[RMDB]
RNA sequence: GGGAACGACUCGAGUAGAGUCGAAAAAAGUAUUGUGUCUUGGUUUCACUAGACUCCUGAUCAUAAUAAUAAAUUACAAGGAAUGUAAGUGUCAGUGGAAUGAAUGUAUGUGGAAGCCAUAGACUUCAGAAAGUUAGGAUCUUUAAGACACUGUAGGGUCUCAUAGUUGUUUCGACAACUAUGAGACAAAAGAAACAACAACAACAAC
Reactivity to 2A3 in 0.01 (KOAc 150mM, MgCl2 10mM, bicine 150mM(pH8.5), 24C), signal-to-noise 2, nucleotides 027 to 156: a010a010g170u150a120u120u140g020u010g000u060c020u020u060g040g010u020u060u050c020a040c020u000a020g030a030c040u030c040c000u080g000a090u070c050a000u020a180a000u010a120a000u060a090a210a020u050u010a040c030a010a010g080g020a110a030u030g000u060a030a090g030u040g040u090c040a000g000u020g040g040a000a010u030g030a090a050u090g060u160a040u050g060u060g050g020a070a010g020c000c010a020u060a090g070a020c000u000u010c040a040g070a110a050a030g030u080u080a010g050g040a030u000c000u000u120u010a060a020g030a030c010a010c010u040g040u070a030g070g070
Reactivity to DMS in 0.01 (KOAc 150mM, MgCl2 10mM, bicine 150mM(pH8.5), 24C), signal-to-noise 2, nucleotides 027 to 156: a050a120g030u000a040u000u000g060u000g020u000c010u000u000g000g020u010u010u000c020a190c040u000a120g000a070c050u000c050c010u000g020a120u000c020a070u000a070a070u000a110a120u000a040a100a070u010u000a040c030a070a080g000g020a080a010u000g000u000a050a060g020u000g020u000c040a080g050u020g000g020a030a070u000g000a110a060u020g000u000a040u000g040u000g020g010a080a050g060c010c040a100u000a190g030a060c020u000u000c060a080g000a050a050a060g000u010u020a070g020g020a080u000c010u010u000u000a070a110g020a020c000a020c010u010g000u000a110g020g000
The record gives the reactivity of an RNA of 207 nucleotides to 2A3 and DMS. 2A3 adducts were read by reverse transcription with SuperScript II with manganese. The reactions ran in a buffer of 150 mM KOAc, 10 mM MgCl2 and 150 mM bicine (pH 8.5), at 24 C. The 2A3 profile rests on 1,323 reads. Source: RMDB library OK3TST, as collected in RNAgym. Values cover nucleotides 27 to 156. For DMS the reverse transcriptase was MarathonRT.